[RMDB]
The record gives the reactivity of an RNA of 177 nucleotides to 2A3 and DMS. The DMS profile rests on 2,763 reads. Values are in units of 0.01, from 0 to 300, in steps of 10.
RNA sequence: GGGAACGACUCGAGUAGAGUCGAAAAUAGGUCUGUGUAUCCCUACCAGAUACUUCCGGUAACUAGGAGUUUGUAGUGACGUAAGUUUAGUCCUAAGAGGACUCAUCAGGUAGCCUAAUAGACUACGGUCUCAUAUGUUGUUCGCAACAUAUGAGACAAAAGAAACAACAACAACAAC
Reactivity to 2A3 in 0.01 (KOAc 150mM, MgCl2 10mM, bicine 150mM(pH8.5), 24C), signal-to-noise 2, nucleotides 027 to 126: u130a000g060g000u040c000u030g070u020g070u080a100u100c020c000c000u000a010c000c000a000g030a040u050a070c000u010u030c040c010g030g030u040a040a020c010u020a030g260g060a210g240u100u150u300g120u090a020g000u010g040a020c010g000u030a030a070g010u010u030u200a000g010u000c000c010u120a270a020g260a090g170g000a000c000u030c010a020u010c030a010g100g000u030a030g020c010c000u070a110a070u090a050g050a000c000u040a060c120g040
Reactivity to DMS in 0.01 (KOAc 150mM, MgCl2 10mM, bicine 150mM(pH8.5), 24C), signal-to-noise 3, nucleotides 027 to 126: u000a080g010g020u010c000u010g010u010g020u010a090u000c050c040c020u010a100c030c000a070g010a050u000a060c010u000u000c030c010g010g000u010a150a080c020u000a050g010g010a150g000u010u010u010g010u020a020g020u000g000a110c050g010u010a020a050g010u000u000u000a050g000u000c000c020u000a120a120g000a190g020g000a010c010u010c260a030u000c060a040g010g000u000a010g010c030c070u000a050a090u010a060g000a010c010u010a070c110g000

The RNA was probed in 150 mM KOAc, 10 mM MgCl2 and 150 mM bicine (pH 8.5) at 24 C.